[RMDB]
RNA sequence: GGGAACGACUCGAGUAGAGUCGAAAAGAUCACUUUACCAACUUCCAGCAUCUACAAGUGGUCGUCUGUCCUUAGUGUCUGUGAACUAGAAGAUGUGAAUCAUGUAGUGGUUUUAGGAGAUGGGACACCGUUCUUGAGGAUUCGUCCUCAAGAACGGAAAAGAAACAACAACAACAAC
Reactivity to 2A3 in 0.01 (KOAc 150mM, MgCl2 10mM, bicine 150mM(pH8.5), 24C), signal-to-noise 2, nucleotides 027 to 126: g010a010u020c000a000c030u040u040u060a030c020c010a090a100c020u100u040c020c030a020g010c000a080u000c010u080a040c020a090a020g020u020g010g030u000c020g040u030c040u060g060u010c010c030u040u080a080g030u080g030u060c050u020g140u040g050a080a030c020u040a050g030a080a010g030a080u030g040u010g100a090a050u120c050a040u190g020u060a030g010u030g030g060u030u040u000u010a060g000g030a080g010a030u070g030g040g000a000c000a010
Reactivity to DMS in 0.01 (KOAc 150mM, MgCl2 10mM, bicine 150mM(pH8.5), 24C), signal-to-noise 3, nucleotides 027 to 126: g000a050u000c010a040c020u000u000u010a170c040c040a060a130c060u010u000c070c060a140g020c050a040u010c040u000a140c220a050a050g050u000g000g000u000c020g010u000c110u010g000u000c030c020u000u010a060g040u020g010u000c020u010g000u010g020a070a140c050u000a030g000a070a060g010a030u000g030u000g020a110a110u000c090a060u000g020u010a060g030u000g000g010u000u000u000u000a110g020g000a130g020a160u000g010g000g010a050c090a130

Description: Chemical mapping of a 177-nucleotide RNA with 2A3 and DMS. The 2A3 profile rests on 2,146 reads. For DMS, 2,663 sequencing reads were counted.